[RMDB]
RNA sequence: GGGAACGACUCGAGUAGAGUCGAAAAGAUGCCAUGCCGACCCGAAGAGGAAAGAAGGACUCGGACGCGAACCCGUAAGGUGAAACUUUCACAUUUAUUGGGGAGUACACUCGAGGAGUGGAAGGCGAGAGCAAACCGUUCGCGGUUUGCAAAAGAAACAACAACAACAAC
Reactivity to DMS in 0.01 (KOAc 150mM, MgCl2 10mM, bicine 150mM(pH8.5), 24C), signal-to-noise 4, nucleotides 027 to 129: g030a000u040g000c110c070a050u020g000c100c010g000a020c010c020c050g030a090a080g000a120g020g050a080a050a080g020a060a050g020g010a060c100u010c070g000g000a070c120g020c100g000a110a130c040c010c010g020u000a050a030g000g000u030g030a040a090a120c170u010u010u000c020a000c030a050u000u000u000a050u000u100g000g000g000g000a150g020u000a120c000a050c050u030c000g000a040g040g030a000g040u040g000g000a030a100g010g000c000g020a070g020a100
Reactivity to 2A3 in 0.01 (KOAc 150mM, MgCl2 10mM, bicine 150mM(pH8.5), 24C), signal-to-noise 6, nucleotides 027 to 129: g050a010u120g030c030c020a040u110g010c000c010g030a040c000c000c000g010a070a030g020a010g060g030a050a040a040g060a000a030g030g000a010c020u010c050g020g020a020c050g030c020g040a050a030c000c000c000g020u070a020a030g010g010u030g040a090a080a120c040u060u120u010c030a050c010a180u080u130u130a110u150u200g020g000g010g000a010g010u030a050c040a020c050u050c010g030a020g000g000a020g050u090g010g010a010a010g010g010c020g000a020g000a010
This 170-nucleotide RNA was probed chemically with DMS and 2A3.
Reactivities are rounded to 0.1 and cut off at 0 and 3.
2A3 adducts were read by reverse transcription with SuperScript II with manganese.
The RNA was probed in 150 mM KOAc, 10 mM MgCl2 and 150 mM bicine (pH 8.5) at 24 C.
For 2A3, 10,738 sequencing reads were counted.